Structure probing data (2A3 and DMS) for a 177-nucleotide construct. The DMS profile rests on 1,244 reads. 2A3 adducts were read by reverse transcription with SuperScript II with manganese. DMS adducts were read by reverse transcription with MarathonRT.

[RMDB]
RNA sequence: GGGAACGACUCGAGUAGAGUCGAAAACAAAAACGGAUUGUGUCCGUAAUCACAACAAACAAAAACAAACGGAUUGUGUCCCUAAUCACAAAAACAAAACAAAAAGGAUUGUGUCCGUAAUCACAAAGAUACCUCCUGGAUUCGUCCAGGAGGUAUCAAAAGAAACAACAACAACAAC
Reactivity to 2A3 in 0.01 (KOAc 150mM, MgCl2 10mM, bicine 150mM(pH8.5), 24C), signal-to-noise 3, nucleotides 027 to 126: c060a030a170a080a010a000c010g000g040a090u030u110g020u110g010u030c000c000g070u090a030a050u050c000a010c000a040a100c020a060a150a030c080a060a120a040a020a040c080a080a130a010c050g000g060a090u060u070g050u010g030u190c000c000c000u100a080a060u130c070a000c030a110a020a010a040a010c100a030a200a010a030c120a070a100a050a030a000g070g020a060u090u050g040u010g000u000c000c040g080u080a040a090u110c030a030c020a100a010a020
Reactivity to DMS in 0.01 (KOAc 150mM, MgCl2 10mM, bicine 150mM(pH8.5), 24C), signal-to-noise 1, nucleotides 027 to 126: c190a000a090a040a030a150c000g000g010a120u000u040g000u000g010u020c000c000g050u000a000a060u030c000a060c110a000a160c300a140a100a080c040a130a040a160a100a030c100a230a090a260c150g000g030a170u000u000g150u090g120u000c080c000c000u000a000a000u000c120a000c060a000a060a000a030a080c100a040a000a120a250c250a070a120a060a290a010g000g000a100u000u000g000u000g060u000c000c040g000u000a100a000u030c040a040c110a090a140a040